[RMDB]
RNA sequence: GGGAACGACUCGAGUAGAGUCGAAAAUGGGGCAUCUUUUUGAAGAGCAGAAGCGAGUUCAGAGCGGAAGAGGUUUUUCAGUGAAUGAAGCUAUUUUUAAGGGAGUGUGAUUGCUGCCCCUUGCUAGUCCGAUCUGGGACUGGGCGUCUUCGGCUAAGACUAAAUUACUAUUCGUAGUAAUUUAGUCAAAAGAAACAACAACAACAAC
Reactivity to 2A3 in 0.01 (KOAc 150mM, MgCl2 10mM, bicine 150mM(pH8.5), 24C), signal-to-noise 6, nucleotides 027 to 156: u070g000g000g000g030c030a030u040c070u040u160u090u130u200g080a080a050g020a010g000c040a020g030a070a010g030c040g030a010g010u060u040c030a010g020a010g060c020g020g030a020a010g030a030g050g000u040u040u010u070u160c050a030g030u020g110a050a050u040g020a040a010g010c020u040a110u130u190u050u100u200a030a020g020g020g010a070g010u060g010u060g060a110u050u150g010c020u040g020c010c000c000c000u000u050g020c020u020a010g020u000c010c000g060a130u050c090u150g050g000g010a010c000u000g020g030g000c010g030u000c030u060u070c030g020g000c040u080a080a040
Reactivity to DMS in 0.01 (KOAc 150mM, MgCl2 10mM, bicine 150mM(pH8.5), 24C), signal-to-noise 3, nucleotides 027 to 156: u000g010g000g060g020c050a050u000c020u000u000u000u000u000g010a100a070g010a120g020c040a110g010a090a080g020c050g010a110g020u000u000c060a070g020a110g030c060g020g000a060a080g010a080g020g020u000u000u010u000u000c040a120g020u000g010a070a110u010g010a100a110g010c040u000a040u000u010u010u010u000a070a100g020g000g010a080g040u000g000u000g000a130u000u010g010c040u000g020c020c020c020c010u000u010g010c040u000a050g010u000c010c000g010a090u000c080u000g020g010g010a030c010u000g030g020g000c030g010u000c050u000u000c070g020g020c070u000a080a250